The data come from the RNA Mapping Database (RMDB), library OK2TRN. Chemical mapping of a 177-nucleotide RNA with DMS and 2A3.
RNA sequence: GGGAACGACUCGAGUAGAGUCGAAAAUGAGAACCGUCAGAGAGGCCGGAAUUCUGACUACAGCAGCAGCAGUCACCCUAUGGGAGAAUGGUGCUAGUUCAGUGUGGAAUGCAACGACAGCUAUUGGCGUUGCCGAUAUGUUCGCAUAUCGGCAACGAAAAGAAACAACAACAACAAC
Reactivity to DMS in 0.01 (KOAc 150mM, MgCl2 10mM, bicine 150mM(pH8.5), 24C), signal-to-noise 5, nucleotides 027 to 126: u010g010a130g000a130a110c080c050g010u010c050a050g020a100g000a080g010g010c040c030g010g010a120a070u010u010c020u000g000a040c030u010a100c130a070g010c090a040g010c030a050g020c030a050g000u000c020a090c030c010c020u010a080u010g010g020g010a080g000a030a040u000g000g000u000g000c030u000a040g010u000u000c100a050g010u010g020u000g000g010a050a030u000g010c050a040a070c050g000a070c070a050g010c060u000a130u000u000g000g000
Reactivity to 2A3 in 0.01 (KOAc 150mM, MgCl2 10mM, bicine 150mM(pH8.5), 24C), signal-to-noise 4, nucleotides 027 to 126: u150g000a030g040a090a050c060c020g060u030c050a030g050a030g020a050g130g050c040c040g060g020a030a040u090u000c030u030g070a050c040u080a040c020a060g000c020a000g000c010a000g010c000a010g030u050c010a070c000c010c030u130a180u260g020g020g010a060g050a040a030u070g060g040u050g080c030u040a060g060u060u070c070a020g030u030g030u060g100g030a060a030u090g010c020a070a010c030g060a020c020a020g010c050u110a090u200u230g080g000
The RNA was probed in 150 mM KOAc, 10 mM MgCl2 and 150 mM bicine (pH 8.5) at 24 C.